[RMDB]
RNA sequence: GGGAACGACUCGAGUAGAGUCGAAAAUGGGUGUUGGGAAUGGCUGCGUCUGUUCCCAGCGCGGCUGUGGCUGCACCCAACUCCAGAUGGGAACGCUGCGAAAUUCCGGUGACAUAUGCCGCGGUUGCGGGUCAGGUAACUUCGGUUACCUGACCCGAAAAGAAACAACAACAACAAC
Reactivity to 2A3 in 0.01 (KOAc 150mM, MgCl2 10mM, bicine 150mM(pH8.5), 24C), signal-to-noise 2, nucleotides 027 to 126: u090g010g000g000u080g040u170u050g040g050g060a050a110u000g010g000c010u050g030c040g150u140c000u000g010u030u000c030c000c000a040g020c010g000c010g030g000c000u000g000u000g020g070c040u100g070c000a060c000c000c000a010a000c000u000c000c000a020g180a270u170g030g130g020a080a030c010g000c030u080g000c030g030a000a040a110u110u000c000c000g050g000u080g000a090c040a070u140a020u220g020c000c010g040c060g000g040u010u090g000
An RNA of 177 nucleotides, treated with 2A3 and read out base by base. Values cover nucleotides 27 to 126. 2A3 adducts were read by reverse transcription with SuperScript II with manganese. Source: RMDB library OK1LIB, as collected in RNAgym. For 2A3, 660 sequencing reads were counted. Conditions: 150 mM KOAc, 10 mM MgCl2 and 150 mM bicine (pH 8.5), 24 C.